[RMDB]
RNA sequence: GGGAACGACUCGAGUAGAGUCGAAAACAUAAUGACUUCGGUCAUUAUGAAAUAAAGGCAGUCGAGUGCGCCCGGCACAGUCACGCGCUGACGCCACGACAAAAAUCGGGACCUUCGGGUCCCGAAACAAUCUCCACAAGUUCGCUUGUGGAGAUUGAAAAGAAACAACAACAACAAC
Reactivity to 2A3 in 0.01 (KOAc 150mM, MgCl2 10mM, bicine 150mM(pH8.5), 24C), signal-to-noise 1, nucleotides 027 to 126: c000a000u010a000a010u010g000a000c000u010u070c190g090g010u010c000a000u000u000a000u000g000a030a010a010u120a020a090a000g030g010c070a020g050u060c050g170a010g070u060g010c000g060c040c080c000g040g000c060a100c020a060g100u080c020a020c120g060c010g000c050u010g020a000c030g020c020c010a060c070g060a010c060a020a140a020a000a020u080c020g000g000g000a000c000c010u030u020c180g060g000g000u000c000c000c000g000a000a000a000
Reactivity to DMS in 0.01 (KOAc 150mM, MgCl2 10mM, bicine 150mM(pH8.5), 24C), signal-to-noise 2, nucleotides 027 to 126: c000a000u000a010a000u000g000a010c010u000u010c250g050g010u000c000a000u010u010a010u000g010a080a080a050u010a070a130a120g010g040c070a070g030u010c010g010a100g030u000g000c040g000c040c040c030g010g000c030a070c060a110g000u010c140a100c080g010c060g000c030u010g000a050c020g010c020c020a100c040g020a020c080a050a080a020a140a060u000c010g020g010g010a030c000c020u000u000c220g050g020g010u000c000c010c020g010a010a040a060
Notes:
This 177-nucleotide RNA was probed chemically with 2A3 and DMS. The RNA was probed in 150 mM KOAc, 10 mM MgCl2 and 150 mM bicine (pH 8.5) at 24 C. For 2A3, 1,655 sequencing reads were counted. 2A3 adducts were read by reverse transcription with SuperScript II with manganese. For DMS the reverse transcriptase was MarathonRT. Source: RMDB library M2PK50, as collected in RNAgym.